[RMDB]
Structure probing data (DMS and 2A3) for a 207-nucleotide construct. For 2A3, 915 sequencing reads were counted. Conditions: 150 mM KOAc, 10 mM MgCl2 and 150 mM bicine (pH 8.5), 24 C.
RNA sequence: GGGAACGACUCGAGUAGAGUCGAAAAUUGUUAAUGAAAAGAAGGUGAAAGAAGGUCUAAGUGAAACUGCUGGCAACUGGGUGUGGACAAGUUUCAUGGAUAGUAUUAUUGAUUGGUACAUUAGUAAAGGAAUUUCUGCACUAAAUUCUUAUAACCAACAACGUGUGUAAUUCGUUACACACGUUGUAAAAGAAACAACAACAACAAC
Reactivity to DMS in 0.01 (KOAc 150mM, MgCl2 10mM, bicine 150mM(pH8.5), 24C), signal-to-noise 2, nucleotides 027 to 156: u010u000g000u000u000a150a120u020g000a150a070a090a150g000a060a090g030g020u000g010a070a100a080g020a080a080g010g040u000c040u000a100a080g050u020g010a080a090a120c040u010g030c010u050g010g030c010a120a100c080u000g000g020g050u000g020u030g000g000a050c050a050a100g020u000u030u010c020a030u000g030g000a110u000a060g030u020a050u000u000a050u000u000g010a170u000u000g010g030u020a040c090a090u010u010a070g000u000a090a100a090g010g010a070a060u010u000u010c070u000g000c090a120c020u000a080a040a060u000u000c030u020u090a130u000a100a140c060c000a070
Reactivity to 2A3 in 0.01 (KOAc 150mM, MgCl2 10mM, bicine 150mM(pH8.5), 24C), signal-to-noise 2, nucleotides 027 to 156: u070u050g030u060u050a080a080u080g050a060a040a000a110g040a030a000g000g030u060g020a080a050a140g050a050a000g020g000u030c030u060a070a060g010u000g070a030a060a080c020u050g020c040u030g060g010c030a070a030c040u060g000g000g040u070g040u040g010g010a030c030a030a010g020u000u090u130c060a030u040g010g020a010u020a080g020u030a020u130u000a040u020u180g070a030u030u040g010g020u050a010c020a050u120u040a080g040u090a130a100a000g000g000a020a000u080u060u000c020u070g000c010a020c070u030a070a070a070u060u020c010u020u120a210u160a140a030c130c010a000